Structure probing data (2A3 and DMS) for a 177-nucleotide construct. Conditions: 150 mM KOAc, 10 mM MgCl2 and 150 mM bicine (pH 8.5), 24 C. High DMS reactivity at an A or C suggests that its Watson-Crick edge is free. 2A3 adducts were read by reverse transcription with SuperScript II with manganese. The DMS profile rests on 11,126 reads. Reactivities are given for positions 27 through 126. Source: RMDB library RFMREP, as collected in RNAgym.
[RMDB]
RNA sequence: GGGAACGACUCGAGUAGAGUCGAAAAACAACCACCUUUCCCGCUGACAAUAGCGUUAUCCCUCUGCACUUCGGUAAUAUGAGGGCACAGUAAAUCCCGCAAGGAUGAGAAUGUGAUGUGGAAUGAGGUAUCUAUUAACGUUCGCGUUAAUAGAUACAAAAGAAACAACAACAACAAC
Reactivity to 2A3 in 0.01 (KOAc 150mM, MgCl2 10mM, bicine 150mM(pH8.5), 24C), signal-to-noise 9, nucleotides 027 to 126: a000c040a020a050c000c010a030c010c010u010u020u020c010c010c000g000c020u040g040a090c090a200a200u100a180g020c010g040u070u070a100u100c000c000c000u000c010u010g010c010a010c020u030u040c140g090g000u020a020a020u150a060u270g000a010g000g000g000c000a000c000a000g000u010a000a030a020u000c010c010c010g110c090a020a020g010g000a010u020g000a000g010a020a020u010g010u010g020a080u110g050u080g020g050a040a060u070g030a060g200
Reactivity to DMS in 0.01 (KOAc 150mM, MgCl2 10mM, bicine 150mM(pH8.5), 24C), signal-to-noise 9, nucleotides 027 to 126: a060c120a120a160c030c020a140c090c060u000u000u000c010c000c000g030c040u000g010a110c190a120a090u010a060g020c040g000u010u010a080u010c000c000c010u000c000u000g000c110a040c010u000u010c170g030g020u000a050a180u010a090u000g000a020g000g010g010c030a010c010a010g010u000a070a180a020u000c010c000c040g010c300a100a300g010g000a010u000g010a080g000a090a130u000g010u000g000a110u000g010u000g010g000a080a040u010g010a090g000